[RMDB]
Overview
The record gives the reactivity of an RNA of 177 nucleotides to DMS and 2A3. For DMS the reverse transcriptase was MarathonRT. For 2A3 the reverse transcriptase was SuperScript II with manganese.

RNA sequence: GGGAACGACUCGAGUAGAGUCGAAAAGCCGCGAUCGCCGCACUGUUUUGCCCCAGAAUGUUCGCCGCGACCAGCGACAUCAACCGGCUGCGGUUGGCCGCGACGAGGGAUGGUGGCACCGUCAUCGCGCGGAUAACCGGUUCGCCGGUUAUCCGCGAAAAGAAACAACAACAACAAC
Reactivity to DMS in 0.01 (KOAc 150mM, MgCl2 10mM, bicine 150mM(pH8.5), 24C), signal-to-noise 1, nucleotides 027 to 126: g010c060c020g050c070g020a070u000c070g000c010c020g050c070a100c110u000g000u000u000u000u040g010c040c010c010c080a130g000a180a050u010g000u000u000c000g020c000c060g050c040g010a040c090c010a130g000c000g010a070c070a050u000c050a120a080c100c070g010g010c120u000g000c020g000g010u000u010g020g010c020c010g040c020g020a070c090g000a060g000g020g020a030u000g000g000u020g050g010c010a300c060c060g000u010c040a110u010c070g010
Reactivity to 2A3 in 0.01 (KOAc 150mM, MgCl2 10mM, bicine 150mM(pH8.5), 24C), signal-to-noise 1, nucleotides 027 to 126: g030c030c020g010c010g040a060u070c040g060c120c010g000c030a060c080u080g140u070u120u130u090g000c000c020c000c020a040g090a160a060u120g040u130u080c040g000c050c000g000c010g050a050c040c010a030g000c030g050a040c030a080u100c020a030a100c010c050g000g010c090u190g040c040g020g070u000u080g040g010c020c000g000c000g010a020c020g020a050g030g050g020a050u070g030g040u060g030g040c030a090c000c000g040u040c010a050u050c020g030

For 2A3, 1,123 sequencing reads were counted.
It was measured as part of the RMDB library OK2TRN.
The reactions ran in a buffer of 150 mM KOAc, 10 mM MgCl2 and 150 mM bicine (pH 8.5), at 24 C.